[RMDB]
This 177-nucleotide RNA was probed chemically with 2A3 and DMS. For DMS, 3,125 sequencing reads were counted. The reactions ran in a buffer of 150 mM KOAc, 10 mM MgCl2 and 150 mM bicine (pH 8.5), at 24 C.
RNA sequence: GGGAACGACUCGAGUAGAGUCGAAAAAGAUUUGGCGAAGAGGCACCAUUUCCUAUAGAGAUUCUUUCCAAAGAAAGAAAUCUCUUGGAUUGGGAGCUCCCUUCAGCCAAUCCUAGGAUCUCACAAGCAUCAUACUAAUCUUCGGAUUAGUAUGAUGAAAAGAAACAACAACAACAAC
Reactivity to 2A3 in 0.01 (KOAc 150mM, MgCl2 10mM, bicine 150mM(pH8.5), 24C), signal-to-noise 3, nucleotides 027 to 126: a010g060a030u140u080u140g000g000c020g000a020a010g020a030g010g000c020a010c010c000a020u110u130u060c000c010u140a110u210a180g010a010g010a010u000u000c000u030u010u000c040c080a220a100a080g010a000a010a000g010a040a160a090u000c000u000c000u000u010g000g000a010u010u000g000g020g010a090g010c010u190c060c010c010u000u020c030a010g000c000c000a000a000u000c000c020u030a080g090g070a100u010c020u010c020a030c030a080a040g080
Reactivity to DMS in 0.01 (KOAc 150mM, MgCl2 10mM, bicine 150mM(pH8.5), 24C), signal-to-noise 3, nucleotides 027 to 126: a090g000a030u010u000u010g010g020c000g010a040a030g000a060g000g020c040a100c030c000a010u000u000u000c000c010u000a180u020a010g010a010g000a010u000u000c000u000u000u010c010c160a080a110a230g010a000a010a010g000a030a050a050u000c000u000c000u000u010g000g000a040u010u000g000g010g000a100g010c030u020c020c020c000u000u000c010a080g020c000c000a010a010u000c020c030u010a130g000g000a100u000c000u010c020a140c200a120a130g020